The record gives the reactivity of an RNA of 177 nucleotides to DMS and 2A3. As a SHAPE reagent, 2A3 marks flexible, mostly unpaired nucleotides at the ribose 2'-OH. 2A3 adducts were read by reverse transcription with SuperScript II with manganese. The data come from the RNA Mapping Database (RMDB), library RFM100.
RNA sequence: GGGAACGACUCGAGUAGAGUCGAAAAAUGGAGGCGGCCCUCCCAAGAGCGGCGGCCGCAGAGGCAUCCAGCCCUCACCCCCCGAUCCGGGACCGCCGGGCUCCCCGCGCUCUAGGGCAGGCGGAGAACUGCGAAAUUAUUUCGAUAAUUUCGCAGUAAAAGAAACAACAACAACAAC
Reactivity to DMS in 0.01 (KOAc 150mM, MgCl2 10mM, bicine 150mM(pH8.5), 24C), signal-to-noise 4, nucleotides 027 to 126: a110u030g000g000a100g010g010c030g000g000c030c010c050u010c010c010c030a180a070g000a070g010c080g000g010c300g000g010c020c030g000c130a080g020a140g000g010c050a080u010c070c090a100g020c020c010c000u020c050a260c050c010c010c010c010c020g010a130u030c080c060g000g010g000a080c040c030g010c020c000g000g000g000c040u000c020c010c020c010g000c060g030c010u000c030u020a100g000g010g010c010a110g010g020c060g020g010a080g000a130
Reactivity to 2A3 in 0.01 (KOAc 150mM, MgCl2 10mM, bicine 150mM(pH8.5), 24C), signal-to-noise 4, nucleotides 027 to 126: a010u100g040g010a030g040g020c040g010g020c020c020c010u070c010c000c000a160a040g040a020g080c090g020g000c010g010g000c030c000g000c020a070g040a060g050g010c010a050u060c050c060a040g020c020c010c010u020c030a060c000c000c000c000c000c000g010a040u050c020c020g010g020g170a230c020c020g000c020c000g010g040g000c000u050c000c010c000c000g010c000g000c010u010c030u050a030g020g040g000c030a020g040g020c030g030g020a030g020a040